[RMDB]
RNA sequence: GGGAACGACUCGAGUAGAGUCGAAAAGAUAUGGACCUCUGCCUUAGGCGAUACGGUUGCUAGCUUACGGUCGGAAACGACCGCGGAGCUUGGACCAAUUAUCGCCUAAGGCAGAGGUCCUAAGUCACUAGACUACAAUGUUCGCAUUGUAGUCUAGAAAAGAAACAACAACAACAAC
Reactivity to DMS in 0.01 (KOAc 150mM, MgCl2 10mM, bicine 150mM(pH8.5), 24C), signal-to-noise 2, nucleotides 027 to 126: g010a070u010a300u000g000g000a030c000c000u000c000u010g010c000c000u000u000a010g010g010c000g030a000u000a050c300g000g000u000u010g020c000u000a000g050c010u010u000a060c000g010g010u000c010g030g000a140a120a240c020g000a000c000c000g030c020g010g000a010g010c010u000u000g000g000a010c010c010a120a180u000u000a000u000c000g010c000c000u000a000a000g000g030c030a000g010a000g000g010u000c000c010u000a010a040g020u000c010a240